[RMDB]
RNA sequence: GGGAACGACUCGAGUAGAGUCGAAAAAUUAUAGGAAUAAAAUUUCUUAAUCCUUAGCAUUACUGAUUGAGCCUUGUAUUUUGGAGAUGCCCCGCCAUAACUCCUCUUUUAUAGCUUGUGGUGACCAUACUAAUGACAUGUUCGCAUGUCAUUAGUAAAAAGAAACAACAACAACAAC
Reactivity to DMS in 0.01 (KOAc 150mM, MgCl2 10mM, bicine 150mM(pH8.5), 24C), signal-to-noise 1, nucleotides 027 to 126: a090u000u000a160u000a050g010g010a090a170u010a160a120a060a300u010u010u010c000u000u010a120a120u010c010c030u000u000a050g020c050a060u000u010a030c080u020g000a060u010u010g010a080g010c050c030u010u000g000u010a040u010u000u010u020g010g010a090g020a100u010g000c040c020c060c040g000c030c020a010u000a060a100c080u000c090c030u000c090u000u000u000u000a080u000a080g000c060u000u000g020u000g010g010u000g010a070c090c060a170